[RMDB]
RNA sequence: GGGAACGACUCGAGUAGAGUCGAAAAGCCUUCCUUCUGCGGUGAUCCUCCCUCUCCUUGUCGGUGAACCCGCUCUUGUGAGGCCUCUUCCCAGGUCCGGAGUCGACCUCCAUCUGAUCCGUCCGGGUAAGUAAUUCCUUCGGGAAUUACAAAAGAAACAACAACAACAAC
Reactivity to 2A3 in 0.01 (KOAc 150mM, MgCl2 10mM, bicine 150mM(pH8.5), 24C), signal-to-noise 9, nucleotides 027 to 129: g020c010c000u050u050c030c000u030u080c040u070g030c030g040g010u070g030a120u050c010c020u040c010c010c010u030c000u030c010c030u050u140g090u100c050g020g000u080g070a060a060c010c000c000g030c010u020c010u020u070g040u050g040a030g000g030c000c010u010c010u010u000c010c000c010a000g020g050u000c020c030g030g020a050g020u040c020g040a080c000c010u010c010c000a080u020c050u080g040a040u000c010c010g070u020c020c020g020g000g020u060a090a020
Reactivity to DMS in 0.01 (KOAc 150mM, MgCl2 10mM, bicine 150mM(pH8.5), 24C), signal-to-noise 8, nucleotides 027 to 129: g000c030c050u010u000c070c040u020u030c060u000g000c070g000g000u030g030a150u030c010c010u040c020c040c000u020c030u030c030c050u000u080g030u040c080g000g000u030g020a140a180c150c010c020g020c000u020c040u020u040g020u000g030a140g000g000c040c000u020c110u030u000c000c000c000a050g020g040u030c070c070g000g000a080g020u030c050g000a100c040c020u000c020c050a060u030c070u020g000a020u000c030c030g040u040c030c050g030g050g040u000a050a120

Conditions: 150 mM KOAc, 10 mM MgCl2 and 150 mM bicine (pH 8.5), 24 C. An RNA of 170 nucleotides, treated with 2A3 and DMS and read out base by base. DMS adducts were read by reverse transcription with MarathonRT. Reactivities are given for positions 27 through 129. For DMS, 64,414 sequencing reads were counted.